[RMDB]
RNA sequence: GGGAACGACUCGAGUAGAGUCGAAAAUGCCAAUGCCGAAGAACGAAGGGAGGUUUCCCCAUGGACCGCUCAACAAUGCUCCGCGCCGGACUGUAAGAUUACCUCCCCGCAGCACCUCUGCCACUUACUAUUGAGGAAAGUUCGCUUUCCUCAAUAGAAAAGAAACAACAACAACAAC
Reactivity to 2A3 in 0.01 (KOAc 150mM, MgCl2 10mM, bicine 150mM(pH8.5), 24C), signal-to-noise 3, nucleotides 027 to 126: u150g020c000c000a060a090u100g000c020c010g070a090a040g010a110a040c090g030a080a050g030g000g000a010g000g010u030u040u040c000c040c030c030a060u130g060g010a040c020c010g040c030u060c030a030a110c010a080a140u150g020c020u010c050c040g000c000g020c010c000g020g030a020c010u030g050u110a080a060g010a160u060u140a050c010c000u020c000c020c010c000g050c010a030g000c020a030c010c020u060c020u030g000c030c000a030c010u040u050a020
Reactivity to DMS in 0.01 (KOAc 150mM, MgCl2 10mM, bicine 150mM(pH8.5), 24C), signal-to-noise 5, nucleotides 027 to 126: u000g010c020c040a110a110u000g000c020c020g010a080a070g010a100a120c120g020a140a140g000g020g010a040g000g000u000u010u000c020c000c010c130a100u010g000g010a080c050c030g000c050u000c060a070a080c120a070a100u010g010c040u000c030c020g010c070g000c060c030g000g000a040c030u000g010u000a070a070g000a100u000u000a080c050c020u000c010c010c010c060g020c050a070g000c070a050c030c030u000c040u010g000c040c060a090c070u000u000a150
The record gives the reactivity of an RNA of 177 nucleotides to 2A3 and DMS. For DMS the reverse transcriptase was MarathonRT. DMS (dimethyl sulfate) methylates the pairing face of unpaired adenines and cytosines. Values are in units of 0.01, from 0 to 300, in steps of 10. For 2A3 the reverse transcriptase was SuperScript II with manganese. The DMS profile rests on 5,357 reads. Source: RMDB library VIROID, as collected in RNAgym.